[RMDB]
RNA sequence: GGGAACGACUCGAGUAGAGUCGAAAAAUAGGAAAAGCAGCAGAGGACACACUGCAUGUAUGCACUGACCUGUGGCAGUACCAUGUUCCUGACUCCAGUGGGAAAAAAAAAAAAGAAAGAUACAAUAUGAAUAUUACACAUUUGUUCAAAGCCAUAGUAAACAAUGCUGAUUCGUCAGCAUUGUUUAAAAAGAAACAACAACAACAAC
Reactivity to 2A3 in 0.01 (KOAc 150mM, MgCl2 10mM, bicine 150mM(pH8.5), 24C), signal-to-noise 1, nucleotides 027 to 156: a000u070a030g000g000a090a020a000a100g000c030a000g010c000a010g040a040g090g090a070c000a010c010a010c140u000g000c070a050u110g090u080a080u150g000c020a030c060u040g060a080c040c010u060g010u030g030g000c020a000g020u030a030c030c000a000u030g070u040u050c000c000u000g030a040c080u020c010c080a010g020u080g100g000g000a000a010a010a000a010a000a000a000a020a010a000a000g050a010a040a020g020a030u290a070c060a120a000u040a040u220g010a050a080u150a080u240u300a030c000a000c000a120u010u010u190g000u030u060c000a110a020a000g000c030c040a050u080a090g100
Reactivity to DMS in 0.01 (KOAc 150mM, MgCl2 10mM, bicine 150mM(pH8.5), 24C), signal-to-noise 1, nucleotides 027 to 156: a080u000a100g020g020a010a080a110a220g030c000a030g050c020a060g040a170g090g020a090c040a090c050a120c000u000g010c060a270u010g010u000a050u000g020c030a100c050u000g040a080c050c050u000g010u010g010g060c100a120g000u000a130c010c050a030u000g000u010u000c010c030u020g000a070c020u000c040c010a060g010u020g000g000g000a000a000a000a000a000a000a000a130a060a110a000a210g000a070a040a100g020a100u000a080c010a070a090u020a020u020g010a120a140u000a050u000u000a140c050a050c060a120u000u010u000g010u000u010c040a070a090a160g000c030c050a060u010a080g000
Structure probing data (2A3 and DMS) for a 207-nucleotide construct. 2A3 adducts were read by reverse transcription with SuperScript II with manganese. Reactivities are given for positions 27 through 156. Source: RMDB library OK3TST, as collected in RNAgym. For 2A3, 896 sequencing reads were counted.